Conditions: 150 mM KOAc, 10 mM MgCl2 and 150 mM bicine (pH 8.5), 24 C.
This 177-nucleotide RNA was probed chemically with 2A3 and DMS.
2A3 is a SHAPE reagent: it acylates the 2'-hydroxyl of flexible nucleotides of all four kinds.
For DMS, 2,584 sequencing reads were counted.
Source: RMDB library OK2TRN, as collected in RNAgym.
[RMDB]
RNA sequence: GGGAACGACUCGAGUAGAGUCGAAAAUGUGCUUUGUUCACUUCUACAUCCACAGUGCCUAAAACAAUGCCAGCACGUAGUAGGUGCUCAGUUAAUGCUUGCAGAGUGAACAGGUGACACACCUGCCUCAUGUAGGCGGAUUCGUCCGCCUACAUGAAAAAGAAACAACAACAACAAC
Reactivity to 2A3 in 0.01 (KOAc 150mM, MgCl2 10mM, bicine 150mM(pH8.5), 24C), signal-to-noise 4, nucleotides 027 to 126: u040g010u010g000c010u010u100u050g020u020u000c000a000c000u150u040c010u050a020c000a050u000c030c010a030c020a040g020u010g010c000c010u030a050a050a020a020c070a070a120u180g120c050c030a040g010c040a030c060g030u040a030g060u020a030g020g000u010g000c010u010c060a040g010u070u160a190a040u170g040c060u010u020g030c040a010g010a000g070u010g000a000a010c000a000g050g000u110g140a030c020a000c000a010c010c030u040g030c010c010
Reactivity to DMS in 0.01 (KOAc 150mM, MgCl2 10mM, bicine 150mM(pH8.5), 24C), signal-to-noise 3, nucleotides 027 to 126: u010g000u000g020c030u000u000u010g010u010u000c010a020c030u010u010c020u000a050c030a020u000c080c010a080c110a000g010u000g010c010c010u010a060a040a040a040c080a200a120u020g010c040c060a060g040c040a130c180g010u000a040g030u010a040g000g030u000g000c030u000c130a060g010u050u010a120a100u000g020c050u000u000g030c030a040g010a030g020u000g000a020a030c020a010g000g010u000g020a080c020a020c050a060c010c010u000g020c060c100